This 177-nucleotide RNA was probed chemically with 2A3 and DMS.
The RNA was probed in 150 mM KOAc, 10 mM MgCl2 and 150 mM bicine (pH 8.5) at 24 C.
It was measured as part of the RMDB libraries RFM100 and RFMREP.
2A3 is a SHAPE reagent: it acylates the 2'-hydroxyl of flexible nucleotides of all four kinds.
RNA sequence: GGGAACGACUCGAGUAGAGUCGAAAACGAUCACGGCGCGAAACGACCCACGUAAGUCUCCAUGUCCUCAAGCCGCCUCGGAGGACGAAGGAGUGGCAGGGCCUCCAGGUCCGCUAUUCGACCACAUGGAAUAUUUCGAAUUCGUUCGAAAUAUUCCAAAAGAAACAACAACAACAAC
Reactivity to 2A3 in 0.01 (KOAc 150mM, MgCl2 10mM, bicine 150mM(pH8.5), 24C), signal-to-noise 5, nucleotides 027 to 126: c030g010a030u100c050a010c060g020g000c010g000c030g030a050a070a060c080g030a090c000c010c000a020c020g030u070a070a070g120u020c010u000c010c030a110u230g030u030c000c000u010c000a050a040g030c010c010g030c020c010u010c030g030g000a010g000g010a010c010g000a080a070g020g000a020g000u040g030g040c080a130g020g030g000c010c000u010c030c010a030g040g000u010c000c000g000c020u030a080u050u050c040g040a060c010c020a050c020a090u070
Reactivity to DMS in 0.01 (KOAc 150mM, MgCl2 10mM, bicine 150mM(pH8.5), 24C), signal-to-noise 3, nucleotides 027 to 126: c060g000a090u010c100a060c070g010g040c050g030c080g000a090a070a120c150g030a110c030c030c020a100c060g010u000a030a070g000u000c000u020c020c020a100u020g030u010c000c010u000c050a040a100g000c030c040g000c030c000u030c110g020g020a030g030g020a060c050g020a080a160g000g040a040g000u020g000g050c040a090g020g010g000c000c000u010c100c140a110g000g000u020c000c030g000c020u020a080u000u000c040g040a110c060c030a080c150a230u000